This 177-nucleotide RNA was probed chemically with 2A3 and DMS. Reactivities are given for positions 27 through 126. 2A3 adducts were read by reverse transcription with SuperScript II with manganese. Source: RMDB libraries RFM100 and RFMREP, as collected in RNAgym. Conditions: 150 mM KOAc, 10 mM MgCl2 and 150 mM bicine (pH 8.5), 24 C.

RNA sequence: GGGAACGACUCGAGUAGAGUCGAAAACUUUUCCAUAGUAGAAGGAGCUUCCCAAAUAAGUCGCCGUACUGGAGAGACGGUUGCGGACUUGUGAAGCUGAAAGGUUCGGAUGUUUUGACAAGAUCAAUAAUCGGAGUCAAUUCGUUGACUCCGAUUAAAAAGAAACAACAACAACAAC
Reactivity to 2A3 in 0.01 (KOAc 150mM, MgCl2 10mM, bicine 150mM(pH8.5), 24C), signal-to-noise 1, nucleotides 027 to 126: c000u000u020u060u030c000c040a070u090a010g230u010a050g030a060a020g200g080a000g000c030u070u000c050c080c000a000a030a000u060a030a000g050u090c020g000c000c000g060u080a220c020u130g160g000a090g030a000g020a180c000g030g000u000u020g110c020g030g010a050c000u010u020g000u000g020a030a000g000c000u040g120a090a090a040g100g000u050u040c050g060g060a130u020g050u180u020u020u010g020a090c060a050a000g030a060u090c040a000a080
Reactivity to DMS in 0.01 (KOAc 150mM, MgCl2 10mM, bicine 150mM(pH8.5), 24C), signal-to-noise 2, nucleotides 027 to 126: c130u010u010u030u020c040c040a100u030a100g010u030a030g020a070a130g020g010a110g020c030u010u000c000c020c040a030a030a020u040a130a200g010u000c080g000c000c010g000u010a100c060u020g000g050a090g010a160g010a030c000g000g000u000u020g020c020g010g010a200c300u000u000g020u000g000a000a030g020c010u010g020a030a050a060g000g020u000u000c100g000g000a080u010g010u000u010u000u010g020a030c100a070a120g000a150u030c050a030a170